[RMDB]
RNA sequence: GGGAACGACUCGAGUAGAGUCGAAAAGAUAUGGAUUAUGUCGCUCGAUAAGCUGGUAUCGGAAACGAUACUCAGCUUUUGACGAGCGCUAUAAUCCUAAGUCAAAACCGAAUCUUCGGAUUCGGAACAUAAACUAUAACUUCGGUUAUAGUUUAUGAAAAGAAACAACAACAACAAC
Reactivity to 2A3 in 0.01 (KOAc 150mM, MgCl2 10mM, bicine 150mM(pH8.5), 24C), signal-to-noise 4, nucleotides 027 to 126: g030a000u060a020u110g000g000a000u010u010a000u010g090u080c010g020c010u010c020g180a150u050a300a010g000c000u020g020g000u000a000u010c000g000g020a060a030a010c020g000a000u000a010c030u040c050a000g000c020u010u000u000u000g050a070c100g000a000g000c000g000c000u000a000u010a010a000u000c000c000u000a090a000g040u020c020a030a010a090a180c000c000g010a000a000u000c020u050u160c300g170g010a000u000u000c010g000g000a000a010
Reactivity to DMS in 0.01 (KOAc 150mM, MgCl2 10mM, bicine 150mM(pH8.5), 24C), signal-to-noise 7, nucleotides 027 to 126: g000a040u000a300u010g000g000a000u000u000a000u000g010u000c000g020c000u000c000g020a180u010a020a020g020c000u000g000g010u000a010u000c010g010g010a100a070a150c000g010a020u000a000c000u020c010a010g020c000u000u000u000u000g020a180c210g000a010g010c000g010c020u010a010u000a010a010u000c000c000u000a030a100g010u000c020a100a090a170a190c010c000g010a010a000u000c000u000u020c220g020g000a010u000u000c000g010g010a060a170
An RNA of 177 nucleotides, treated with 2A3 and DMS and read out base by base. Source: RMDB library TTRDES, as collected in RNAgym. The RNA was probed in 150 mM KOAc, 10 mM MgCl2 and 150 mM bicine (pH 8.5) at 24 C.